[RMDB]
RNA sequence: GGGAACGACUCGAGUAGAGUCGAAAAGAAGAUAAGAAAAUUUUCCGGUGGCCACCCGCCCGGGCCACCGUUACUCCACUCCACUCCUUCGGGACUGGUUUGGAGGAACAUAACUGGGCGGAAAGAAGAUCGUAAUGGGUUUCGACCCAUUACGAUCAAAAGAAACAACAACAACAAC
Reactivity to 2A3 in 0.01 (KOAc 150mM, MgCl2 10mM, bicine 150mM(pH8.5), 24C), signal-to-noise 2, nucleotides 027 to 126: g050a010a000g100a100u280a140a090g100a170a240a220a140u060u080u050u030c040c000g000g000u000g000g000c000c010a060c010c010c000g000c000c000c000g000g000g010c000c000a000c000c000g000u010u030a020c000u000c000c000a000c000u000c000c000a010c040u000c000c000u020u080c150g070g000g010a000c000u020g020g000u000u000u000g000g000a020g000g000a000a020c020a030u200a140a040c090u150g000g000g030c040g000g010a010a000a000g010a060a000

Structure probing data (2A3) for a 177-nucleotide construct. For 2A3, 1,369 sequencing reads were counted. Source: RMDB library OK1LIB, as collected in RNAgym. The RNA was probed in 150 mM KOAc, 10 mM MgCl2 and 150 mM bicine (pH 8.5) at 24 C.